The record gives the reactivity of an RNA of 177 nucleotides to DMS.
RNA sequence: GGGAACGACUCGAGUAGAGUCGAAAAGCGGCUGAAUUGAAGAAGCAGGGUCUCGGCGCCCUGAAUGCCGAAGCCAAGGGAACUUCCGCCAAUGAGCGCCUCAAUAUCGAUGCGCGUGUAACCGGCAGGGGAUUAAAAUGUUCGCAUUUUAAUCCCCAAAAGAAACAACAACAACAAC
Reactivity to DMS in 0.01 (KOAc 150mM, MgCl2 10mM, bicine 150mM(pH8.5), 24C), signal-to-noise 1, nucleotides 027 to 126: g000c050g000g010c010u020g010a080a130u010u000g010a210a230g010a130a080g040c020a050g000g020g010u000c080u000c040g000g000c060g030c060c040c000u000g000a070a040u020g000c010c000g000a040a060g020c030c010a060a100g000g000g000a150a130c040u010u000c040c060g010c020c060a070a160u010g030a180g000c000g010c050c020u000c010a080a230u000a130u010c130g000a030u000g000c060g020c060g040u020g040u000a130a140c060c110g010g000c070a130